[RMDB]
RNA sequence: GGGAACGACUCGAGUAGAGUCGAAAAUCACAUAUAUUGCUAAGGGAAAGAAGCCAGUCUGAAAAGGCUACAUGUUGUAUGAUUCCAACUGUAAGAUAUUCUAGAUAAGGCAAAACUAUAGAUCUAGCCCACUAUCAAGUUUCGACUUGAUAGUGGGAAAAGAAACAACAACAACAAC
Reactivity to 2A3 in 0.01 (KOAc 150mM, MgCl2 10mM, bicine 150mM(pH8.5), 24C), signal-to-noise 2, nucleotides 027 to 126: u070c000a000c000a000u280a030u080a040u160u110g040c040u040a070a080g090g000g020a100a070a110g130a090a010g000c050c020a020g040u030c070u050g030a040a050a010a000g090g000c000u000a000c020a030u230g010u030u050g050u060a080u140g140a170u100u020c030c000a020a010c050u010g000u030a000a010g010a110u070a130u150u000c020u000a020g010a040u090a070a120g020g000c000a020a040a080a040c070u080a080u060a150g020a020u050c000u000a010g040
Reactivity to DMS in 0.01 (KOAc 150mM, MgCl2 10mM, bicine 150mM(pH8.5), 24C), signal-to-noise 3, nucleotides 027 to 126: u010c050a100c130a080u000a080u010a070u000u000g010c020u010a080a160g010g020g000a060a050a070g000a100a150g020c010c020a100g020u000c070u000g000a110a050a080a070g000g010c020u000a010c020a040u020g010u000u000g010u010a100u010g000a110u020u020c150c000a030a030c060u000g010u010a040a070g010a110u000a060u000u000c020u000a040g000a030u000a050a120g000g010c040a020a070a090a160c070u000a080u030a090g000a080u010c010u000a060g030